[RMDB]
RNA sequence: GGGAACGACUCGAGUAGAGUCGAAAAUAAUAAAAGUGUGUGAAACGUUGGAAUAUGUCACAUAUCCAAAAAAUUGCUAUGCCUCGCACGAAAGGGUUUUUGAUUUUGUAAACAUUAAUUGAAAUUAGUACCCAUUUAGGUUCGCCUAAAUGGGUACAAAAGAAACAACAACAACAAC
Reactivity to DMS in 0.01 (KOAc 150mM, MgCl2 10mM, bicine 150mM(pH8.5), 24C), signal-to-noise 1, nucleotides 027 to 126: u010a090a170u000a080a100a080a160g010u000g040u050g020u000g000a100a090a070c120g000u020u000g000g000a170a040u010a020u000g000u010c050a030c060a010u000a040u000c050c030a000a000a050a080a010a210u020u000g010c060u000a090u000g000c010c030u000c040g030c020a040c090g010a050a110a060g000g000g000u000u000u000u000u000g000a100u000u000u000u010g010u030a060a220a150c090a040u020u000a040a130u010u010g000a000a050a130u020u000a100